[RMDB]
RNA sequence: GGGAACGACUCGAGUAGAGUCGAAAAGAAAGCUGGAGACUCGCGGAAUUUCAUUCAAGAAGAAGGUAACGGAGAAAGGAGCGGGCCUCCCGAUCCGAGUGGUCCACGGCGUAUCAAGUUUGGAGUCGAGUUCUUAAUAGUUCGCUAUUAAGAACUCAAAAGAAACAACAACAACAAC
Reactivity to 2A3 in 0.01 (KOAc 150mM, MgCl2 10mM, bicine 150mM(pH8.5), 24C), signal-to-noise 2, nucleotides 027 to 126: g010a060a060a010g080c070u050g050g000a010g010a020c010u020c010g030c040g100g150a050a050u040u020u150c030a040u080u090c060a170a060g120a100a030g020a020a030g300g030u140a110a000c040g020g010a000g000a030a020a010g020g020a010g000c060g000g040g000c000c000u020c010c000c000g010a010u000c010c000g000a010g000u070g000g050u000c010c010a000c020g000g030c010g040u040a060u190c050a040a060g040u060u130u090g060g020a050g030u150c090
Reactivity to DMS in 0.01 (KOAc 150mM, MgCl2 10mM, bicine 150mM(pH8.5), 24C), signal-to-noise 3, nucleotides 027 to 126: g010a140a070a130g000c080u010g010g000a090g000a030c040u000c030g010c020g000g020a300a120u010u000u000c020a120u000u010c060a090a130g010a110a130g000a050a080g000g010u010a070a160c110g000g000a110g000a050a060a040g000g030a260g010c060g010g010g010c070c010u000c000c010c050g000a080u000c020c030g000a070g010u010g010g000u000c010c050a050c050g020g050c090g010u010a050u000c080a070a090g000u000u000u000g000g000a060g010u010c120